Structure probing data (DMS and 2A3) for a 177-nucleotide construct. 2A3 is a SHAPE reagent: it acylates the 2'-hydroxyl of flexible nucleotides of all four kinds.

RNA sequence: GGGAACGACUCGAGUAGAGUCGAAAACUUUGUCGAAGGGACAAUGGGCACUCCAUUGCCCAGAGAGGCUUCUCACCCAGGAAAGCACUGGAGGUGCAGAGGCAGGAGCACGCGGGGGCUUGGCUGCCACAUUCCAAGCCUUCGGGCUUGGAAUGUGAAAAGAAACAACAACAACAAC
Reactivity to DMS in 0.01 (KOAc 150mM, MgCl2 10mM, bicine 150mM(pH8.5), 24C), signal-to-noise 3, nucleotides 027 to 126: c030u010u010u000g020u010c030g030a300a130g010g010g000a070c040a020a030u000g020g000g030c210a130c220u000c020c030a030u010u000g000c010c010c010a030g000a280g000a160g010g000c030u000u000c010u000c020a110c040c000c030a150g010g010a100a120a100g020c120a070c040u010g010g020a090g000g010u000g010c080a040g010a040g010g010c020a060g000g000a040g000c030a030c120g020c060g010g010g010g000g000c040u000u000g000g030c120u000g000c110
Reactivity to 2A3 in 0.01 (KOAc 150mM, MgCl2 10mM, bicine 150mM(pH8.5), 24C), signal-to-noise 1, nucleotides 027 to 126: c000u170u140u150g040u080c030g030a060a060g020g050g070a070c020a020a020u020g020g020g020c120a100c250u170c010c030a030u010u050g030c010c010c010a000g000a000g010a000g010g050c000u030u000c010u020c020a040c010c020c020a010g030g040a150a250a060g130c090a040c060u020g010g050a080g120g100u060g010c070a020g010a000g010g000c060a040g120g030a030g000c020a000c040g110c050g010g040g020g030g000c000u040u000g080g000c030u030g020c010
The 2A3 profile rests on 884 reads.
Conditions: 150 mM KOAc, 10 mM MgCl2 and 150 mM bicine (pH 8.5), 24 C.